[RMDB]
RNA sequence: GGGAACGACUCGAGUAGAGUCGAAAAGGGAUAAGAGAGUACUCUUAUCCCCACGUCGUUGGUGACAACGACGAUUAUUACGUACGCAUACGCCGGGCGUACGCUUACUCCACUCAACUGCUUCGGCACUUGUUUGGAGGAAGAUAACACGGCUAAAUGCGUAGCUCAUAUUCGUAUGAGCUACGCAAAAAGAAACAACAACAACAAC
Reactivity to 2A3 in 0.01 (KOAc 150mM, MgCl2 10mM, bicine 150mM(pH8.5), 24C), signal-to-noise 1, nucleotides 027 to 156: g010g000g000a000u000a000a030g000a000g010a020g170u240a200c000u000c000u000u000a000u000c000c010c050c000a010c000g000u010c000g000u000u000g010g050u060g010a000c000a000a000c000g000a000c010g010a000u050u040a170u080u150a080c000g000u000a000c000g000c030a020u020a090c090g000c000c000g000g000g000c000g000u000a000c010g050c000u000u050a010c000u000c000c000a000c000u000c000a000a000c000u020g000c000u040u060c280g120g010c000a000c000u000u010g010u020u000u000g000g000a000g020g010a000a010g010a000u100a100a030c130a050c080g000g000c000u020a070a090a070